[RMDB]
RNA sequence: GGGAACGACUCGAGUAGAGUCGAAAACAACACGUGCCGAUCGGCCAUCGUUCCACGGGCGGGGCUAGAUGACACCCCGAACAGGAAGGUCGCCAGGCCCGGCGACAGCAACAAGAGGCCCAUGUAGCAUCGAAGGAUACUUCGGUAUCCUUCGAUGAAAAGAAACAACAACAACAAC
Reactivity to 2A3 in 0.01 (KOAc 150mM, MgCl2 10mM, bicine 150mM(pH8.5), 24C), signal-to-noise 1, nucleotides 027 to 126: c030a000a010c030a000c170g020u000g000c010c010g090a150u060c040g050g000c020c000a160u110c050g050u040u030c030c010a080c170g040g030g000c000g000g000g070g000c100u100a060g100a300u160g060a060c010a040c030c010c000c000g000a030a010c010a000g000g070a040a030g000g020u000c030g000c000c010a030g050g020c020c020c020g010g010c030g040a010c030a050g040c020a010a080c020a090a050g040a030g040g000c010c010c030a070u200g000u080a050g050
Reactivity to DMS in 0.01 (KOAc 150mM, MgCl2 10mM, bicine 150mM(pH8.5), 24C), signal-to-noise 2, nucleotides 027 to 126: c090a160a040c090a070c070g010u000g000c040c010g010a050u000c080g000g020c010c080a090u000c090g010u000u000c010c010a110c150g010g010g020c010g020g000g030g000c080u030a110g000a090u000g000a140c220a170c030c010c000c000g020a070a040c080a090g000g000a070a080g020g030u000c040g000c010c020a130g010g010c040c040c020g010g000c020g020a030c030a060g020c070a070a020c110a080a100g000a150g010g000c000c030c040a070u010g000u010a130g010

About this RNA: Chemical mapping of a 177-nucleotide RNA with 2A3 and DMS. The reactions ran in a buffer of 150 mM KOAc, 10 mM MgCl2 and 150 mM bicine (pH 8.5), at 24 C. Values cover nucleotides 27 to 126. The DMS profile rests on 1,888 reads.